An RNA of 177 nucleotides, treated with 2A3 and DMS and read out base by base. For 2A3 the reverse transcriptase was SuperScript II with manganese. In probing experiments dimethyl sulfate is read out at A N1 and C N3, which are open when not base-paired. The reactions ran in a buffer of 150 mM KOAc, 10 mM MgCl2 and 150 mM bicine (pH 8.5), at 24 C.
RNA sequence: GGGAACGACUCGAGUAGAGUCGAAAAUGCUUCAUGCCAGCGGCCGAGGAGUGGAAAGAAAAUUGGGACGUCCAGACCUCGUGUGAUGCUGCGACGUUUCGCUUCGAUCAGGAUGGAGCAGCUGCUGUGCUGUAUGCGCUUUCGAGCGCAUACAGCAAAAAGAAACAACAACAACAAC
Reactivity to 2A3 in 0.01 (KOAc 150mM, MgCl2 10mM, bicine 150mM(pH8.5), 24C), signal-to-noise 1, nucleotides 027 to 126: u010g000c010u010u030c010a020u200g170c010c010a040g000c000g100g000c020c000g000a040g020g000a040g000u110g000g180a070a050a010g130a020a240a030a070u060u080g010g020g000a000c000g010u000c010c000a010g030a180c030c000u070c080g070u140g130u050g150a100u200g020c020u040g050c030g030a020c040g000u040u030u170c020g000c040u090u050c040g040a050u000c010a030g030g020a020u040g000g000a030g030c000a020g000c040u160g000c070u030g050
Reactivity to DMS in 0.01 (KOAc 150mM, MgCl2 10mM, bicine 150mM(pH8.5), 24C), signal-to-noise 1, nucleotides 027 to 126: u020g040c070u000u020c020a030u000g030c100c060a090g030c030g000g010c060c010g050a080g010g000a130g030u000g010g010a070a090a180g000a100a050a030a150u020u010g030g010g010a140c030g020u010c020c020a030g000a200c040c010u000c180g050u010g020u010g010a030u020g000c010u000g030c140g000a000c140g000u000u000u020c010g000c070u010u000c090g010a100u000c030a110g000g020a050u020g010g000a050g000c000a030g000c100u000g010c090u000g000